[RMDB]
RNA sequence: GGGAACGACUCGAGUAGAGUCGAAAAUGCCAGGUGAUAACAUUCAAAUGAUUGUUAACCUGAUUGCUCCUAUCGCAAUGGAUGACGGCUUGCGCUUUGCAAUUCGUGAAGGCGGUCGUACUGUAGGUAGCAUGCCUAUUUUCGAAUAGGCAUGCUAAAAAGAAACAACAACAACAAC
Reactivity to DMS in 0.01 (KOAc 150mM, MgCl2 10mM, bicine 150mM(pH8.5), 24C), signal-to-noise 3, nucleotides 027 to 126: u010g020c070c010a010g000g010u000g010a120u020a000a000c000a010u000u000c050a230a140a170u020g010a020u010u000g000u000u000a090a040c010c000u000g000a170u010u000g000c040u000c020c020u000a050u000c140g010c070a080a100u010g000g010a150u000g000a020c010g000g000c000u000u010g020c010g010c010u000u010u010g020c010a160a180u040u020c170g000u000g010a020a010g020g030c000g000g010u000c010g040u000a060c070u010g000u010a050g000g020
Reactivity to 2A3 in 0.01 (KOAc 150mM, MgCl2 10mM, bicine 150mM(pH8.5), 24C), signal-to-noise 4, nucleotides 027 to 126: u160g010c000c000a000g000g010u030g110a150u030a100a020c020a020u020u010c080a200a220a300u300g020a010u000u010g020u000u010a070a120c010c000u000g040a060u050u120g020c030u000c000c000u030a090u100c050g010c110a050a070u130g120g000a060u110g070a010c020g000g010c010u070u300g010c300g060c030u030u000u020g040c010a110a300u290u150c090g000u010g020a000a010g000g000c010g020g000u000c000g010u000a060c020u030g060u040a040g030g040